RNA sequence: GGGAACGACUCGAGUAGAGUCGAAAAGACGCGAGAGACGCGAGACGCGCAAUGGCAGAAGCCGCAAUAGAUUAUACGACGCAAGAGGCAAGACGGAGAGCGCGCAGCUUGCGUUAAUAACCAAGAACCUAGGACUACGGUUCGCCGUAGUCCUAGGAAAAGAAACAACAACAACAAC
Reactivity to 2A3 in 0.01 (KOAc 150mM, MgCl2 10mM, bicine 150mM(pH8.5), 24C), signal-to-noise 3, nucleotides 027 to 126: g090a010c020g000c000g020a050g030a020g030a060c010g000c020g010a010g000a020c070g010c000g010c010a000a170u100g020g010c010a010g000a140a030g080c040c000g080c020a000a070u100a140g040a030u100u140a040u160a200c140g000a000c000g000c020a030a000g010a000g110g000c020a020a050g040a050c050g080g080a070g010a000g080c040g000c000g010c020a030g020c000u000u010g000c000g000u000u000a030a070u060a060a030c070c050a000a060g030a040a040
Reactivity to DMS in 0.01 (KOAc 150mM, MgCl2 10mM, bicine 150mM(pH8.5), 24C), signal-to-noise 2, nucleotides 027 to 126: g000a020c030g030c050g010a100g020a080g000a140c090g000c060g000a110g000a110c090g010c020g030c010a160a120u000g000g040c080a130g000a160a080g070c000c010g000c140a060a100u060a030g000a080u000u000a090u080a040c160g000a030c010g000c020a020a000g000a180g000g000c000a040a280g000a190c060g000g030a090g000a140g040c080g000c300g030c090a000g000c050u000u000g000c030g000u010u000a050a030u000a020a090c050c120a050a240g020a100a110